[RMDB]
RNA sequence: GGGAACGACUCGAGUAGAGUCGAAAAAGUCAGAGGGCGCUACCAUGCAAACUAGGGCUGGCUACUCUUGCACAGAAUCACAUCUCGAUAAUUGUCAGUGCAAGAAGGAUAAUUAUACCAUUUAAUGAAAACGUUUACCUGUUCGCAGGUAAACGAACAGCAGGGGAAAGUUCGCUUUCCCCUGCUGAAAAGAAACAACAACAACAAC
Reactivity to 2A3 in 0.01 (KOAc 150mM, MgCl2 10mM, bicine 150mM(pH8.5), 24C), signal-to-noise 2, nucleotides 027 to 156: a010g010u000c000a000g010a030g050g030g000c100g010c020u030a160c030c100a050u230g050c020a020a020a070c030u050a010g060g000g000c000u010g010g000c010u070a050c000u020c000u000u000g000c030a010c010a010g140a030a060u150c050a050c020a140u040c040u100c050g080a050u050a190a070u130u050g040u030c100a010g020u010g030c000a000a020g020a000a000g070g000a030u020a030a070u210u160a120u080a120c040c000a050u210u170u120a160a120u150g060a040a030a000a030c010g010u000u000u000a000c000c000u030g000u020u010c150g030c090a000g000g000u000a000a000a000c000g000a000a000

Conditions: 150 mM KOAc, 10 mM MgCl2 and 150 mM bicine (pH 8.5), 24 C. An RNA of 207 nucleotides, treated with 2A3 and read out base by base. The 2A3 profile rests on 646 reads. As a SHAPE reagent, 2A3 marks flexible, mostly unpaired nucleotides at the ribose 2'-OH. The data come from the RNA Mapping Database (RMDB), library M2RFOK.